Annotation: Chemical mapping of a 207-nucleotide RNA with 2A3. Conditions: 150 mM KOAc, 10 mM MgCl2 and 150 mM bicine (pH 8.5), 24 C.
[RMDB]
RNA sequence: GGGAACGACUCGAGUAGAGUCGAAAAACAUGAGAGAAUAGGCUGGGCGCGGUGGCUCACACCUGUAAUCCCAACACUUUGGGAGGCUGAGGCGGGUGGAUCACAAGGUCAGGAGAUCGAGACCAUCCUGGCCAACAUGGUGAAACCCCAUCUCUGAGAUAAUUUAGCUGUUCGCAGCUAAAUUAUCAAAAGAAACAACAACAACAAC
Reactivity to 2A3 in 0.01 (KOAc 150mM, MgCl2 10mM, bicine 150mM(pH8.5), 24C), signal-to-noise 1, nucleotides 027 to 156: a010c070a110u170g000a020g020a000g030a140a090u100a110g110g000c030u020g040g010g000c040g040c060g060g010u000g010g020c030u000c050a060c000a000c000c020u100g030u100a050a080u010c000c010c020a030a020c130a060c190u160u120u010g000g000g000a020g000g040c020u030g030a030g030g100c050g020g000g020u040g000g060a010u010c010a040c020a110a050g000g000u010c020a000g000g030a050g010a040u140c160g020a020g030a100c040c000a010u000c000c010u000g000g000c040c000a010a000c020a010u090g000g050u010g010a000a060a070c000c000c000c000a030u000c020u000c000u030g020a030
Reactivities are rounded to 0.1 and cut off at 0 and 3. Source: RMDB library OK3TST, as collected in RNAgym.